[RMDB]
Description
An RNA of 207 nucleotides, treated with DMS and 2A3 and read out base by base. Reactivities are given for positions 27 through 156. 2A3 adducts were read by reverse transcription with SuperScript II with manganese. The 2A3 profile rests on 789 reads. In probing experiments dimethyl sulfate is read out at A N1 and C N3, which are open when not base-paired.
RNA sequence: GGGAACGACUCGAGUAGAGUCGAAAAAACAUGGGGACCUGGUAUUAAGGAAUUGUAAUGGCUCAAGCAACGCAAACUACAGAUCUGAAUUAGCACAGUAGCAAUGUGAAAAAGGAAUGAAAUUGAGAUAUUGAAAUGGUAAAAUAGGCAGGAAUGACCUCGGCAUAAAUUUCGAUUUAUGCCGAGGAAAAGAAACAACAACAACAAC
Reactivity to DMS in 0.01 (KOAc 150mM, MgCl2 10mM, bicine 150mM(pH8.5), 24C), signal-to-noise 1, nucleotides 027 to 156: a110a060c060a070u000g000g020g020g000a040c010c040u000g040g010u000a020u010u000a080a080g040g010a120a120u000u000g010u000a040a090u010g000g040c000u010c020a120a100g030c040a090a070c120g020c040a070a110a070c010u000a040c070a040g010a120u000c010u000g010a080a070u010u000a040g020c060a020c030a170g060u010a130g010c000a100a120u010g000u010g010a040a050a070a110a060g050g010a110a050u010g000a040a020a080u000u000g010a060g010a130u010a040u010u000g010a030a010a060u010g000g020u000a060a000a060a080u000a070g030g040c060a030g030g010a070a020u000g040a160
Reactivity to 2A3 in 0.01 (KOAc 150mM, MgCl2 10mM, bicine 150mM(pH8.5), 24C), signal-to-noise 1, nucleotides 027 to 156: a000a000c050a080u030g000g030g010g000a030c000c000u030g060g010u060a030u020u180a080a020g000g040a010a080u100u070g050u060a060a010u050g040g000c020u050c070a090a020g010c000a070a090c050g010c030a120a010a000c050u030a070c020a110g050a010u000c010u070g070a050a090u100u050a040g000c020a010c000a030g080u080a080g070c070a110a070u070g020u000g070a060a050a020a000a000g030g020a030a030u090g010a000a050a000u000u040g050a020g000a050u040a020u030u090g030a060a040a040u080g010g010u030a010a070a020a070u050a040g050g000c020a000g000g010a000a020u000g010a000